RNA sequence: GGGAACGACUCGAGUAGAGUCGAAAAUGCUGUCGUUGACAGCGCCCAACGCUUCACAACCUGAAAGAAGCGCCUGUUAUCAGGACGGUUGAUCCAUUUACCGGUGCAGACCUCUGCAAACCCCGGGUUUAACAAGCAUCUUUCGAGAUGCUUGUAACGUUGAGAAUCACUUCGGUGAUUCUCAACGAAAAGAAACAACAACAACAAC
Reactivity to 2A3 in 0.01 (KOAc 150mM, MgCl2 10mM, bicine 150mM(pH8.5), 24C), signal-to-noise 1, nucleotides 027 to 156: u110g000c000u000g010u110c080g300u060u300g000a010c000a010g000c000g030c000c000c000a010a020c000g000c000u010u000c000a030c010a060a000c000c010u000g000a000a000a000g020a000a000g000c010g000c000c000u190g010u250u130a190u300c010a000g010g000a000c000g000g000u010u000g000a080u030c030c000a050u030u090u230a110c000c000g000g000u000g000c000a000g060a250c070c080u170c030u040g070c000a060a200a120c030c040c000c000g030g000g020u040u170u000a050a000c000a000a000g000c000a000u000c000u050u110u120c190g110a000g000a020u020g000c050u000u000g000u000a000a080